[RMDB]
RNA sequence: GGGAACGACUCGAGUAGAGUCGAAAAGCUCUCCAGCAGGAGCUAGAGCGAAGACAUGUGAGGGGCUCCAGCAUCACUUGUCGAUUAGCAGCUUGACGUGGAGCACCAGCAACGUCUUGCUGCGAAAGGGUAGCUUGUGGUUCGCCACGAGCUACCCAAAAGAAACAACAACAACAAC
Reactivity to 2A3 in 0.01 (KOAc 150mM, MgCl2 10mM, bicine 150mM(pH8.5), 24C), signal-to-noise 3, nucleotides 027 to 126: g000c010u000c000u010c070c050a060g020c040a030g050g080a030g010c000u010a020g010a010g100c070g050a040a010g000a020c010a000u040g010u000g020a020g000g040g040g000c000u000c010c000a040g040c040a020u010c010a000c000u010u000g030u040c000g080a110u080u100a010g000c000a000g000c000u010u010g000a000c010g000u010g020g010a030g020c010a080c030c060a040g070c040a030a010c010g000u010c000u000u000g000c000u000g000c000g010a020a010a000
Reactivity to DMS in 0.01 (KOAc 150mM, MgCl2 10mM, bicine 150mM(pH8.5), 24C), signal-to-noise 3, nucleotides 027 to 126: g000c020u000c000u000c060c110a150g000c090a090g000g010a050g030c010u000a010g000a090g010c050g000a080a110g020a000c000a020u000g000u000g000a040g020g000g000g010c000u000c000c010a100g030c100a200u000c010a010c030u000u010g000u010c010g000a140u020u020a100g010c010a000g000c000u000u000g010a010c010g010u000g010g020a050g010c010a190c090c120a090g040c160a080a120c000g020u000c000u000u000g000c000u000g010c000g010a030a080a080
Record summary
An RNA of 177 nucleotides, treated with 2A3 and DMS and read out base by base. For 2A3, 5,742 sequencing reads were counted. The reactions ran in a buffer of 150 mM KOAc, 10 mM MgCl2 and 150 mM bicine (pH 8.5), at 24 C. For DMS the reverse transcriptase was MarathonRT. 2A3 adducts were read by reverse transcription with SuperScript II with manganese.